[RMDB]
RNA sequence: GGGAACGACUCGAGUAGAGUCGAAAACUGUUCUCGGAUAAUCUGAUGGAAGCGUGCAGCCCGAGACGGAAUGCAACCAAAGCUGUCAUGCACUAGAGCGAAGUGCUUGAACCCUUCCUUGGCUGCGGGAUUUGCCGAUGUUCGCAUCGGCAAAUCCAAAAGAAACAACAACAACAAC
Reactivity to 2A3 in 0.01 (KOAc 150mM, MgCl2 10mM, bicine 150mM(pH8.5), 24C), signal-to-noise 2, nucleotides 027 to 126: c030u040g110u130u040c040u040c020g080g010a040u080a150a100u090c000u090g030a070u220g060g210a080a060g100c090g050u080g060c030a000g030c000c000c000g000a000g000a000c020g050g000a130a060u210g000c060a080a000c100c000a020a000a020g100c040u050g030u080c000a060u060g000c000a000c000u010a010g010a000g240c060g150a180a010g000u020g010c000u010u010g040a010a040c020c000c000u000u000c000c020u000u000g060g020c060u060g000c000g060